Structure probing data (2A3 and DMS) for a 177-nucleotide construct. Reactivities are given for positions 27 through 126. Conditions: 150 mM KOAc, 10 mM MgCl2 and 150 mM bicine (pH 8.5), 24 C. For 2A3, 11,979 sequencing reads were counted. 2A3 adducts were read by reverse transcription with SuperScript II with manganese.

[RMDB]
RNA sequence: GGGAACGACUCGAGUAGAGUCGAAAAGAUAUGGAUUUGCUACCCACCGAACUACAGAUUAUACUCGGAAACGAGUAGAAUCUGCGAGGCAAAUCCUAAGUCAAACAGUAGUGUUCGCACUACUGAAGGAUAUGUAUUGGUUCGCCAAUACAUAUCCAAAAGAAACAACAACAACAAC
Reactivity to 2A3 in 0.01 (KOAc 150mM, MgCl2 10mM, bicine 150mM(pH8.5), 24C), signal-to-noise 6, nucleotides 027 to 126: g090a040u170a190u230g000g010a010u000u030u020g000c020u100a250c010c030c050a050c050c040g050a100a090c090u210a060c300a010g010a000u010u020a030u020a050c000u000c010g010g000a070a080a030c010g000a010g000u010a010g000a000a010u000c000u020g050c030g030a020g000g020c000a010a000a000u010c000c010u020a080a010g170u190c160a140a090a110c010a050g010u000a010g010u020g070u120u090c300g040c110a000c010u010a000c000u000g040a060a050
Reactivity to DMS in 0.01 (KOAc 150mM, MgCl2 10mM, bicine 150mM(pH8.5), 24C), signal-to-noise 6, nucleotides 027 to 126: g010a090u010a140u010g010g010a000u000u000u000g000c000u000a110c030c050c040a300c110c050g000a080a060c060u010a150c010a010g010a010u000u000a080u000a000c000u000c000g010g010a070a080a170c010g010a010g020u000a000g010a020a020u000c000u000g000c010g010a110g020g000c000a000a010a010u000c000c000u000a050a050g010u020c120a070a090a240c010a010g000u000a000g020u000g010u000u020c210g020c000a010c000u000a000c010u000g000a060a100